The record gives the reactivity of an RNA of 207 nucleotides to DMS and 2A3. Source: RMDB library ARCHII, as collected in RNAgym. For DMS, 2,427 sequencing reads were counted. For 2A3 the reverse transcriptase was SuperScript II with manganese. The RNA was probed in 150 mM KOAc, 10 mM MgCl2 and 150 mM bicine (pH 8.5) at 24 C.
RNA sequence: GGGAACGACUCGAGUAGAGUCGAAAAACAUGGAGUUUCGACUCCAUGUACACGGUUCCAAUAGUGUAGCGGCUAUCACGUUGCCUUCACACGGCAAAGGUCCCGAGUUCGAUCCUCGGUUGGAACACCAGCAAUAUGUGAGGUUCGCCUCACAUAAACAUUGACGUGGUUUCGACCACGUCAAUGUAAAAGAAACAACAACAACAAC
Reactivity to DMS in 0.01 (KOAc 150mM, MgCl2 10mM, bicine 150mM(pH8.5), 24C), signal-to-noise 1, nucleotides 027 to 156: a080c010a070u000g030g020a040g030u000u000u010c190g000a070c000u020c000c010a000u000g000u000a060c060a110c040g000g010u000u000c020c000a040a110u000a050g020u000g040u000a060g000c230g000g040c040u000a140u020c150a090c000g020u000u000g030c000c000u000u000c150a150c060a160c300g000g050c010a040a030a080g020g030u000c020c000c000g010a060g030u000u000c050g030a300u000c100c000u000c000g010g000u000u000g000g000a090a010c030a090c030c040a110g020c160a080a130u020a020u000g010u000g020a050g050g020u000u000c210g110c020c000u000c000a010c010a000u000a020a080
Reactivity to 2A3 in 0.01 (KOAc 150mM, MgCl2 10mM, bicine 150mM(pH8.5), 24C), signal-to-noise 4, nucleotides 027 to 156: a010c010a010u010g000g010a030g020u090u170u180c180g160a060c000u000c000c000a000u000g000u050a010c060a020c070g070g010u030u030c010c000a000a030u080a040g020u020g050u020a050g040c100g120g010c080u060a020u150c050a010c100g020u000u020g000c000c000u060u100c100a110c030a020c040g000g020c000a010a040a060g050g030u080c000c000c000g010a000g010u050u070c020g010a050u050c010c000u010c010g010g000u010u000g000g010a040a000c030a060c040c020a030g080c080a110a110u040a010u070g000u000g000a000g020g040u030u120c200g070c030c010u000c000a010c000a000u030a030a020